The record gives the reactivity of an RNA of 207 nucleotides to 2A3.
RNA sequence: GGGAACGACUCGAGUAGAGUCGAAAAGUAGGACUUUCGAGUCCUACAAAAAGCGUACUACUAGAGGUGUAGGGAGAUGGUGUCCCAAAUAGGACAUGCAUCUUUGAUCUACACUCCCCACCUAGUAUCGCAAAAAAUCUACCUUUCGAGGUAGAAAUGACUAACCACCGUUCGCGGUGGUUAGUCAAAAAGAAACAACAACAACAAC
Reactivity to 2A3 in 0.01 (KOAc 150mM, MgCl2 10mM, bicine 150mM(pH8.5), 24C), signal-to-noise 1, nucleotides 027 to 156: g000u000a010g000g000a000c000u050u050u000c090g000a010g000u030c000c040u000a000c000a000a010a010a010a010g050c050g060u100a070c020u000a000c000u000a100g000a000g030g040u030g000u000a010g000g000g000a010g010a000u000g010g010u010g000u040c090c050c000a140a220a070u260a040g000g000a000c010a010u100g210c000a000u280c000u080u140u100g150a040u000c000u000a000c000a010c040u070c010c000c000c000a010c020c000u020a000g000u010a040u300c180g000c140a030a030a030a030a030a030u050c010u080a010c010c010u000u090u150c280g070a010g000g010u010a000g010a000a030a000